[RMDB]
RNA sequence: GGGAACGACUCGAGUAGAGUCGAAAAGCACUAGAGGGCGUAACGGCUGGGUGUAACCCAACUCUAGGUGUGCUGAUUAGCGGGCUUGACUCCGUAACAAAUAGGCACUGGGGGUAAAAAGCAUCCCUGACCAUAUACAUCUUCGGAUGUAUAUGAAACCAAGCUAUGUGUUCGCACAUAGCUUGGUAAAAGAAACAACAACAACAAC
Reactivity to DMS in 0.01 (KOAc 150mM, MgCl2 10mM, bicine 150mM(pH8.5), 24C), signal-to-noise 1, nucleotides 027 to 156: g020c000a070c000u020a060g000a110g020g000g040c060g000u000a130a090c260g000g000c030u000g000g050g020u010g010u060a070a300c010c000c010a020a060c000u000c100u010a100g000g000u010g000u000g000c010u010g010a230u010u000a140g000c000g000g010g000c050u010u000g010a180c120u010c010c000g020u000a070a110c110a000a030a060u000a070g000g040c030a060c030u000g000g000g000g000g000u000a070a080a030a130a090g000c080a180u000c010c010c010u000g010a200c080c010a020u000a000u000a010c010a010u010c000u010u000c300g000g020a070u010g040u010a010u000a010u000g000a040a130